[RMDB]
RNA sequence: GGGAACGACUCGAGUAGAGUCGAAAAGAUAUGGAAUCUAGCAACAGCUACCGGGUCGGAAACGACCCGUAGACAUGCUGAUUCCUAAGUCAAAACGUACUGUUUUACUUCGGUAAAACAGUACGAAGUAGACGUAUGGGUUCGCCCAUACGUCUACAAAAGAAACAACAACAACAAC
Reactivity to 2A3 in 0.01 (KOAc 150mM, MgCl2 10mM, bicine 150mM(pH8.5), 24C), signal-to-noise 2, nucleotides 027 to 126: g000a010u040a010u110g000g000a020a000u030c110u160a270g000c000a020a160c090a150g070c020u020a020c110c290g040g010g000u000c000g030g000a010a050a030c000g010a010c070c020c010g000u010a000g000a060c030a030u030g000c000u000g000a000u000u000c000c000u020a080a010g060u060c030a010a000a060a170c000g000u000a000c000u000g020u010u020u010u000a010c010u060u060c250g130g000u020a000a000a000a000c000a000g000u010a000c000g000a030a010
Reactivity to DMS in 0.01 (KOAc 150mM, MgCl2 10mM, bicine 150mM(pH8.5), 24C), signal-to-noise 2, nucleotides 027 to 126: g000a010u000a300u020g000g000a030a000u000c010u020a020g030c000a020a100c300a160g000c000u000a010c080c090g010g020g010u000c000g000g000a050a070a120c010g030a000c000c010c000g010u000a010g010a120c080a130u000g010c020u000g000a030u000u000c000c000u000a030a070g000u000c030a070a050a110a200c020g000u010a010c000u000g000u000u000u000u000a000c000u000u010c270g060g000u010a000a000a000a020c000a010g010u000a010c020g000a040a070